[RMDB]
RNA sequence: GGGAACGACUCGAGUAGAGUCGAAAACUAUGUGAAGCAUAGUCACCGAGAGGAGUUAACCCGGAGAACUGAAACAUCUAAGUACCCGGAGGAAGAGAAAACAAUAGUGAUUCCGUAAGUAGCGGCGACAUCGUGCAUGGUUCGCCAUGCACGAUGUAAAAGAAACAACAACAACAAC
Reactivity to 2A3 in 0.01 (KOAc 150mM, MgCl2 10mM, bicine 150mM(pH8.5), 24C), signal-to-noise 2, nucleotides 027 to 126: c000u000a030u000g030u060g300a010a120g130c030a010u000a000g010u030c030a020c020c060g080a160g000a040g030g000a040g040u100u100a050a090c010c010c000g000g010a010g000a020a020c020u000g020a020a120a000c030a080u030c010u080a030a060g000u010a040c030c060c100g000g000a010g030g000a000a000g040a030g000a100a020a020a000c060a040a040u080a010g120u070g020a070u050u060c000c020g020u020a160a070g060u020a040g050c000g050g000c030g040
Reactivity to DMS in 0.01 (KOAc 150mM, MgCl2 10mM, bicine 150mM(pH8.5), 24C), signal-to-noise 3, nucleotides 027 to 126: c000u030a020u020g030u010g000a160a140g020c010a010u080a040g030u000c050a200c010c000g000a160g040a140g000g000a010g000u000u000a090a110c100c030c050g000g000a050g000a110a050c100u040g010a070a080a040c110a040u040c060u030a090a120g040u010a060c130c040c080g040g020a070g000g000a030a080g000a120g000a070a100a030a020c100a070a010u010a040g020u020g000a080u000u000c010c040g010u020a040a100g050u010a130g040c060g000g000c170g000